[RMDB]
Description:
An RNA of 177 nucleotides, treated with 2A3 and DMS and read out base by base. It was measured as part of the RMDB library OK2TRN. 2A3 adducts were read by reverse transcription with SuperScript II with manganese. DMS adducts were read by reverse transcription with MarathonRT. For DMS, 58,414 sequencing reads were counted.
RNA sequence: GGGAACGACUCGAGUAGAGUCGAAAAGAAGUCACCCUUAGUGGAUGCGAAGUGGUUUACGAUGCCUGUCCGCGAUCCUUUGCCGGUGGGGUAUGGUGGCCACGCACUCCUCUUGGAGGAGUUGCCACCAGUCCAAUUGAUUCGUCAAUUGGACUGGAAAAGAAACAACAACAACAAC
Reactivity to 2A3 in 0.01 (KOAc 150mM, MgCl2 10mM, bicine 150mM(pH8.5), 24C), signal-to-noise 9, nucleotides 027 to 126: g120a080a010g090u120c040a070c010c020c000u030u120a120g020u120g110g040a080u080g060c050g080a170a050g060u040g070g050u050u090u270a030c040g030a010u050g010c000c010u050g120u050c020c000g010c030g060a130u160c050c040u160u140u150g090c110c030g050g020u170g060g040g000g000u020a020u040g140g000u010g000g000c000c000a010c020g000c010a010c020u000c020c000u030c070u100u190g150g020a020g010g010a020g010u020u080g020c010c000a050
Reactivity to DMS in 0.01 (KOAc 150mM, MgCl2 10mM, bicine 150mM(pH8.5), 24C), signal-to-noise 9, nucleotides 027 to 126: g010a120a110g010u010c050a050c010c010c020u010u010a120g020u010g010g010a040u000g010c040g010a120a130g020u000g010g010u000u000u010a040c050g010a040u000g010c010c010u000g000u000c010c020g010c070g010a060u010c160c200u000u000u000g010c100c040g010g010u000g010g000g000g010u000a020u000g000g040u000g000g000c010c040a030c040g000c070a070c010u000c000c000u000c020u010u010g030g010a020g000g000a050g010u000u000g010c010c150a160